[RMDB]
The data come from the RNA Mapping Database (RMDB), library M2RFPK. The record gives the reactivity of an RNA of 207 nucleotides to 2A3. For 2A3 the reverse transcriptase was SuperScript II with manganese.
RNA sequence: GGGAACGACUCGAGUAGAGUCGAAAACGACUCAAUACGUCCCCGUCGUACAGAAUGGUAACAUAUCUCUCCAAAUAUCUGAGCUUGGGUAUACGGGGAAACCCUACCCCUUGGGAAGAUUGGGUAUAAAAGGAGCGAUCCUUCGGGAUCGCUCCAACCUAGUGACAGUGUUCGCACUGUCACUAGGAAAAGAAACAACAACAACAAC
Reactivity to 2A3 in 0.01 (KOAc 150mM, MgCl2 10mM, bicine 150mM(pH8.5), 24C), signal-to-noise 2, nucleotides 027 to 156: c050g000a000c010u010c040a060a070u070a140c050g020u040c000c020c010c020g050u070c030g020u040a040c060a050g060a090a140u130g070g000u160a170a040c020a020u190a190u060c000u000c010u000c050c030a100a140a200u140a110u090c080u060g020a010g070c040u040u050g020g000g020u070a070u020a080c060g020g010g030g000a030a010a000c000c010c010u000a010c000c000c000c020u000u060g000g000g010a020a030g000a040u020u030g010g060g030u050a080u110a140a070a030a050g000g000a000g040c000g000a000u010c000c000u060u010c170g030g010g000a000u000c000g000c010u010c000c000a000a000